[RMDB]
The data come from the RNA Mapping Database (RMDB), library OK2TST. An RNA of 177 nucleotides, treated with DMS and 2A3 and read out base by base.
RNA sequence: GGGAACGACUCGAGUAGAGUCGAAAAUACCAGGUGGAUACUCGAGAAGCAGCCACCACGGAAUAUAAUGUGAAGGCAUUUUCUAUGACCAGCGGCAUACUAUAUCCGGGAUAUCAACUUCUCUCAAGUCACUAAAUAGGUUCGCCUAUUUAGUGACAAAAGAAACAACAACAACAAC
Reactivity to DMS in 0.01 (KOAc 150mM, MgCl2 10mM, bicine 150mM(pH8.5), 24C), signal-to-noise 4, nucleotides 027 to 126: u010a210c020c010a110g020g010u000g000g010a140u010a060c100u010c100g020a040g000a070a030g000c110a060g020c010c010a030c020c000a160c030g000g000a090a040u010a020u000a030a040u000g030u000g010a250a120g000g010c020a030u000u000u010u010c180u000a070u020g000a100c010c030a050g010c150g010g010c020a020u010a060c170u000a030u000a030u000c020c010g020g010g010a100u000a070u000c150a080a070c080u000u000c030u000c020u010c180a080a160
Reactivity to 2A3 in 0.01 (KOAc 150mM, MgCl2 10mM, bicine 150mM(pH8.5), 24C), signal-to-noise 5, nucleotides 027 to 126: u120a020c000c020a010g020g020u010g000g030a080u060a190c050u070c190g040a030g010a050a010g000c100a010g000c010c010a000c000c010a000c010g010g010a100a000u080a000u010a050a060u060g010u030g070a060a060g030g000c020a010u040u090u150u110c150u170a080u080g150a300c000c010a020g020c030g100g010c020a020u030a060c040u050a060u020a050u050c010c000g030g000g040a030u050a050u180c020a010a050c010u040u020c010u010c000u000c060a070a040

The DMS profile rests on 3,296 reads.
Conditions: 150 mM KOAc, 10 mM MgCl2 and 150 mM bicine (pH 8.5), 24 C.